The record gives the reactivity of an RNA of 177 nucleotides to 2A3 and DMS.
For DMS, 2,448 sequencing reads were counted.
The 2A3 profile rests on 4,067 reads.
The RNA was probed in 150 mM KOAc, 10 mM MgCl2 and 150 mM bicine (pH 8.5) at 24 C.
The data come from the RNA Mapping Database (RMDB), library M2PK50.
For 2A3 the reverse transcriptase was SuperScript II with manganese.
RNA sequence: GGGAACGACUCGAGUAGAGUCGAAAAGCUCGGCCUUUCGAGGCCGAGCAGACGCCGUUUGCCUUGGCUAUAGGCUAAAUUAAAACACAAGCUGAAACACAACUGCUGAACAUUUCGAUGUUCAGAACGAAUUAGGAACAUUCGUGUUCCUAAUUCGAAAAGAAACAACAACAACAAC
Reactivity to 2A3 in 0.01 (KOAc 150mM, MgCl2 10mM, bicine 150mM(pH8.5), 24C), signal-to-noise 3, nucleotides 027 to 126: g000c010u000c000g000g030c000c010u100u080u090c180g080a010g000g040c060c000g020a010g020c000a010g000a000c090g040c010c010g030u020u070u090g030c020c000u040u050g060g000c040u090a060u060a160g020g000c000u020a030a090a080u140u150a040a070a070a000c110a030c030a040a040g040c050u090g070a050a110a010c030a010c010a090a130c070u130g000c010u000g040a000a000c000a010u110u110u070c210g110a020u000g000u000u010c010a010g010a030a010
Reactivity to DMS in 0.01 (KOAc 150mM, MgCl2 10mM, bicine 150mM(pH8.5), 24C), signal-to-noise 3, nucleotides 027 to 126: g030c000u000c000g010g000c000c000u010u010u010c140g020a030g000g060c000c020g000a000g050c000a020g010a120c220g020c010c010g010u010u010u010g010c000c010u000u000g020g020c040u010a070u000a040g000g000c010u000a030a080a110u000u010a060a040a060a100c090a090c130a090a070g000c060u000g010a110a060a070c090a050c080a040a040c130u010g000c000u010g000a020a010c000a020u000u000u010c140g020a030u000g000u000u000c000a010g010a070a140